Description: The record gives the reactivity of an RNA of 177 nucleotides to DMS and 2A3. For DMS, 5,683 sequencing reads were counted. Reactivities are given for positions 27 through 126.
RNA sequence: GGGAACGACUCGAGUAGAGUCGAAAACGGCGUGGAGCAAUUGUUGGUGUUCCUCCCACAGGGUGCCGCGAUCGCACAGACCGUACUCACGCCAACUCCGGGUGCUGCCCAGCUGCCGCUCGCGCCGGAACUGCGAUAGAUUCGUCUAUCGCAGUUCAAAAGAAACAACAACAACAAC
Reactivity to DMS in 0.01 (KOAc 150mM, MgCl2 10mM, bicine 150mM(pH8.5), 24C), signal-to-noise 3, nucleotides 027 to 126: c030g020g020c000g030u000g010g010a020g040c050a180a120u010u020g010u000u010g020g010u000g010u000u020c010c020u000c020c000c030a100c190a150g010g000g010u000g000c030c060g010c060g000a080u020c100g000c110a110c040a070g010a170c040c060g040u010a060c040u000c070a070c030g000c010c030a060a130c040u000c110c090g010g010g010u010g010c060u010g000c000c030c020a120g000c050u010g040c070c070g030c000u000c010g000c000g000c010c000g000
Reactivity to 2A3 in 0.01 (KOAc 150mM, MgCl2 10mM, bicine 150mM(pH8.5), 24C), signal-to-noise 8, nucleotides 027 to 126: c030g010g010c000g020u070g210g040a040g010c040a110a120u120u070g030u010u040g010g010u040g050u080u040c010c010u040c020c020c010a070c040a070g070g030g000u040g020c020c030g060c060g040a090u070c050g000c040a050c010a070g070a040c010c020g030u040a040c020u020c020a030c020g050c000c010a030a060c030u040c030c020g030g000g020u070g030c040u070g020c010c020c000a030g010c030u080g040c030c040g000c000u000c010g000c000g000c010c000g000